[RMDB]
RNA sequence: GGGAACGACUCGAGUAGAGUCGAAAAGAAAGCUCCUCAACCGUGUGGAGGAGAAUGGCUAUAACCACAGAAACCUGAGGAAACAGGAAGCCACAACGCAAGCCAUGUGGUUUGCACACGGAAGAAAAUGCCAGCGUAGGUUCGCCUACGCUGGCAUAAAAGAAACAACAACAACAAC
Reactivity to 2A3 in 0.01 (KOAc 150mM, MgCl2 10mM, bicine 150mM(pH8.5), 24C), signal-to-noise 1, nucleotides 027 to 126: g080a010a050a000g050c000u000c000c000u000c000a180a240c000c030g000u000g020u010g000g000a010g000g000a000g020a000a000u070g080g010c000u000a000u110a260a000c000c000a070c080a040g220a090a030a030c000c000u070g000a060g070g230a000a170a000c040a000g000g000a010a000g000c010c000a020c040a070a110c180g030c040a020a000g130c000c000a070u120g070u000g260g000u040u000u110g000c000a000c000a000c000g000g010a000a000g120a000a020a040

The record gives the reactivity of an RNA of 177 nucleotides to 2A3. Reactivities are rounded to 0.1 and cut off at 0 and 3. 2A3 adducts were read by reverse transcription with SuperScript II with manganese. Source: RMDB library OK1LIB, as collected in RNAgym. The RNA was probed in 150 mM KOAc, 10 mM MgCl2 and 150 mM bicine (pH 8.5) at 24 C. For 2A3, 606 sequencing reads were counted.